The record gives the reactivity of an RNA of 207 nucleotides to DMS and 2A3.
Values cover nucleotides 27 to 156.
For 2A3 the reverse transcriptase was SuperScript II with manganese.
Conditions: 150 mM KOAc, 10 mM MgCl2 and 150 mM bicine (pH 8.5), 24 C.
Values are in units of 0.01, from 0 to 300, in steps of 10.
For DMS the reverse transcriptase was MarathonRT.
[RMDB]
RNA sequence: GGGAACGACUCGAGUAGAGUCGAAAAUGUCACUUGAUGUGAUAUAAUAGGUAUUUUGUUAUGAGUACAUGAUCGAGAAAUUAUGUACUCACAAGCAGUAAGUGACUGCUACAAAUUUCUCGACUAUUAUAUCACAAGCAGUAAGUGACUGCUAGGACGUUACCAGGUAUUUCGAUACCUGGUAACGAAAAGAAACAACAACAACAAC
Reactivity to DMS in 0.01 (KOAc 150mM, MgCl2 10mM, bicine 150mM(pH8.5), 24C), signal-to-noise 2, nucleotides 027 to 156: u000g000u010c000a020c010u010u010g020a240u020g030u000g010a010u000a000u000a000a010u000a000g010g000u000a070u000u000u010u000g000u010u000a100u000g020a020g020u000a010c000a030u010g000a080u010c000g000a300g000a190a030a040u000u000a040u000g010u000a020c020u010c010a030c030a040a090g010c010a040g010u010a130a190g020u000g010a110c120u020g020c010u000a130c010a040a040a080u000u000u000c060u000c050g030a090c020u000a010u000u010a010u000a000u000c000a010c000a040a110g040c100a130g010u010a040a030g010u000g000a020c010u000g040c040u020a150g020g030a250
Reactivity to 2A3 in 0.01 (KOAc 150mM, MgCl2 10mM, bicine 150mM(pH8.5), 24C), signal-to-noise 6, nucleotides 027 to 156: u120g000u010c000a000c010u010u040g030a030u080g060u010g000a000u000a000u000a010a000u000a000g050g020u100a170u060u180u060u060g060u060u150a130u160g010a000g010u010a000c000a010u010g020a010u060c080g070a010g030a090a070a010u030u030a020u010g000u000a010c000u010c010a010c000a020a010g000c000a010g020u150a230a080g070u110g220a050c000u010g000c000u010a020c030a020a100a040u030u060u030c070u020c010g030a020c010u000a000u000u000a000u000a010u000c000a000c000a000a010g040c020a020g030u200a110a010g020u000g040a020c000u010g050c020u060a060g110g090a010